Source: RMDB library OK3TST, as collected in RNAgym. Chemical mapping of a 207-nucleotide RNA with 2A3 and DMS. The reactions ran in a buffer of 150 mM KOAc, 10 mM MgCl2 and 150 mM bicine (pH 8.5), at 24 C. Values cover nucleotides 27 to 156. For 2A3, 1,350 sequencing reads were counted.

RNA sequence: GGGAACGACUCGAGUAGAGUCGAAAACGCAAGGCAUUUUCAUCGUUGAGCGAUUUUGACAUGGCGGAUCACCCUUCUAAGUAUAAAUUCGUCACCGAUGGCAAGACUGUCAAGGUCUGGACCGACGACGGGUUCAUGGAUCUGAGCGACACUCACAUCCCUAAUUGAGUUUCGACUCAAUUAGGGAAAAAGAAACAACAACAACAAC
Reactivity to 2A3 in 0.01 (KOAc 150mM, MgCl2 10mM, bicine 150mM(pH8.5), 24C), signal-to-noise 3, nucleotides 027 to 156: c060g020c050a030a040g060g000c010a030u040u050u120u050c010a060u060c020g030u030u080g040a030g100c040g020a020u000u030u040u050g060a060c070a120u100g010g020c040g040g060a100u150c030a100c000c040c000u050u030c060u090a100a090g080u060a070u090a280a090a040u050u030c020g050u020c050a010c040c050g030a030u040g000g040c040a040a020g030a110c020u020g020u100c050a050a020g000g000u010c020u010g010g050a070c020c030g030a070c050g040a050c060g080g040g000u010u060c090a100u080g040g030a050u020c010u040g060a010g020c020g020a000c020a010c070u020c010a040c000a080
Reactivity to DMS in 0.01 (KOAc 150mM, MgCl2 10mM, bicine 150mM(pH8.5), 24C), signal-to-noise 2, nucleotides 027 to 156: c050g020c050a160a060g040g020c080a100u000u020u000u000c050a060u000c060g020u000u000g020a130g030c040g020a120u000u000u000u000g040a110c070a110u010g000g030c010g030g000a090u000c050a080c020c010c010u000u010c070u000a040a190g020u010a140u000a040a040a100u000u000c060g020u000c000a060c030c010g010a080u000g000g010c030a170a070g000a090c040u010g020u040c100a090a070g020g000u000c000u010g030g010a300c050c020g000a100c120g010a030c110g010g000g030u010u010c040a080u010g020g000a050u010c020u000g020a090g040c070g000a110c040a170c040u010c050a080c070a280